The record gives the reactivity of an RNA of 177 nucleotides to DMS.
RNA sequence: GGGAACGACUCGAGUAGAGUCGAAAAGAUAUGGACGGAGCGAUAAGCUGGUGUCGGAAACGACACCCAGCUUUUGACGCUCUGUCCUAAGUCAAAACGAGCGUACACCUUCGGGUGUACGCUCGAACACAGGGGUAUUCUUCGGAAUACCCCUGUGAAAAGAAACAACAACAACAAC
Reactivity to DMS in 0.01 (KOAc 150mM, MgCl2 10mM, bicine 150mM(pH8.5), 24C), signal-to-noise 2, nucleotides 027 to 126: g010a030u000a220u000g000g010a010c010g010g010a000g010c010g000a140u000a040a020g010c010u000g020g030u000g010u010c010g010g010a070a060a140c000g000a010c000a020c170c120c080a000g000c000u000u000u010u000g020a280c050g000c010u000c000u000g000u000c000c000u000a010a030g020u000c030a080a080a110a210c010g000a010g000c000g020u000a010c000a000c000c000u010u030c210g010g020g060u030g000u000a000c000g010c000u000c010g020a030a090
The DMS profile rests on 1,538 reads. Source: RMDB library TTRDEL, as collected in RNAgym. The reactions ran in a buffer of 150 mM KOAc, 10 mM MgCl2 and 150 mM bicine (pH 8.5), at 24 C.